[RMDB]
RNA sequence: GGGAACGACUCGAGUAGAGUCGAAAAAGUUAGGUUCGCUAUGGUGCAACUCUUGAAGGCAAUAACGAACUAAUUCUAAGCAAGUAAUGGAGAAAUGCCAGGGUCACUAUCUAGCCAUAAUAGUGCUGUAAGUGACUUAGAUUCGUCUAAGUCACAACCGAUGAGUUACUUUCGAGUAACUCAUCGGAAAAGAAACAACAACAACAAC
Reactivity to 2A3 in 0.01 (KOAc 150mM, MgCl2 10mM, bicine 150mM(pH8.5), 24C), signal-to-noise 4, nucleotides 027 to 156: a000g090u080u040a060g010g050u010u000c010g000c030u020a020u080g110g040u050g100c060a110a130c020u040c090u120u210g070a090a030g020g000c000a020a030u040a070a040c050g040a030a020c010u010a000a020u070u080c050u110a080a060g050c020a060a040g010u100a070a080u050g060g040a050g060a090a080a020u080g040c040c000a050g020g000g040u050c010a010c020u020a030u060c030u040a020g040c010c010a010u020a140a020u050a120g090u050g030c060u040g050u110a200a140g000u000g000a000c000u000u000a010g000a000u010u040c110g030u000c130u000a010a000g000u000c000a000c010a000a010
Reactivity to DMS in 0.01 (KOAc 150mM, MgCl2 10mM, bicine 150mM(pH8.5), 24C), signal-to-noise 2, nucleotides 027 to 156: a110g020u000u000a060g020g020u010u000c030g000c020u000a040u000g030g040u000g000c030a080a150c120u000c100u000u000g010a120a110g030g040c030a060a010u000a060a070c020g000a020a050c020u020a040a070u000u010c060u000a090a120g000c030a080a140g010u000a070a070u000g000g000a100g010a090a050a080u000g010c060c040a130g000g000g010u000c010a070c060u000a060u000c040u000a120g010c060c050a080u000a040a030u000a060g070u000g060c020u010g030u000a050a120g020u000g020a040c000u000u000a020g010a040u010u000c300g030u000c000u000a010a020g010u000c000a000c010a060a110
The record gives the reactivity of an RNA of 207 nucleotides to 2A3 and DMS. For DMS, 3,461 sequencing reads were counted. The reactions ran in a buffer of 150 mM KOAc, 10 mM MgCl2 and 150 mM bicine (pH 8.5), at 24 C.